[RMDB]
RNA sequence: GGGAACGACUCGAGUAGAGUCGAAAACGAAUAGUGGGAGGAAAGGAAGACCAAUAGGUAGCAGGUAUACACAAUGUCAAAAUUUGCUCAAAUGGUACACCCUAAAUGUGUUUAAGUUUAUUGUGUUUCAGUUAUACCUCAACAGACUUGGCGAAAAAGCUAAUUACGGAUUCGUCCGUAAUUAGCUAAAAGAAACAACAACAACAAC
Reactivity to 2A3 in 0.01 (KOAc 150mM, MgCl2 10mM, bicine 150mM(pH8.5), 24C), signal-to-noise 4, nucleotides 027 to 156: c030g000a050a010u070a080g080u080g010g030g000a030g020g080a040a020a040g050g000a020a000g050a030c040c030a110a100u160a100g040g030u050a030g080c090a020g000g040u060a030u050a040c030a010c010a020a090u120g050u120c050a020a030a070a090u100u070u070g020c030u010c060a030a050a110u090g000g000u040a050c040a100c040c050c000u080a130a150a090u160g040u010g050u000u100u110a040a040g000u030u060u100a020u060u010g030u010g000u000u100u090c020a020g000u000u030a010u030a060c020c000u030c050a020a080c010a040g070a070c030u050u040g020g010c020g050a140a050a000a000
Reactivity to DMS in 0.01 (KOAc 150mM, MgCl2 10mM, bicine 150mM(pH8.5), 24C), signal-to-noise 3, nucleotides 027 to 156: c060g000a080a060u000a040g050u010g010g030g010a080g010g010a060a090a100g020g020a110a090g000a100c050c030a070a080u000a070g000g040u010a100g060c060a020g010g020u000a070u000a050c060a070c060a050a060u020g000u000c100a050a040a080a120u010u000u000g030c010u000c030a040a030a070u000g020g030u000a050c040a050c040c070c070u030a070a080a070u000g010u000g020u000u010u000a040a170g010u000u000u000a050u010u000g000u000g020u000u010u000c040a130g020u000u010a110u000a020c060c000u000c050a030a090c080a090g010a060c060u000u000g010g040c050g010a050a060a060a160
The data come from the RNA Mapping Database (RMDB), library OK3TST. Structure probing data (2A3 and DMS) for a 207-nucleotide construct. Values cover nucleotides 27 to 156. Conditions: 150 mM KOAc, 10 mM MgCl2 and 150 mM bicine (pH 8.5), 24 C. DMS adducts were read by reverse transcription with MarathonRT. For DMS, 5,895 sequencing reads were counted.